[RMDB]
RNA sequence: GGGAACGACUCGAGUAGAGUCGAAAAGAUAUGGAUAUGCUAUCAGGAACUACAGAGCGAGUCGGAAACGACUCGACUCUGCCGACGACGGCAUAUCCUAAGUCAAAGUGGCGGUUCGCCGCCACAAGUUAACCAUUGACUUCGGUCAAUGGUUAACAAAAGAAACAACAACAACAAC
Reactivity to DMS in 0.01 (KOAc 150mM, MgCl2 10mM, bicine 150mM(pH8.5), 24C), signal-to-noise 2, nucleotides 027 to 126: g010a020u000a280u000g000g000a000u000a000u000g000c000u000a020u000c000a090g010g000a120a020c080u010a300c040a000g000a010g000c020g000a010g010u000c000g010g000a060a070a150c010g000a000c000u000c000g000a030c010u000c000u000g030c020c020g030a090c300g020a010c010g000g020c000a000u020a000u000c000c000u010a010a090g020u000c040a130a130a130g000u000g000g010c030g000g000u000u020c300g010c010c000g000c000c010a000c010a020a070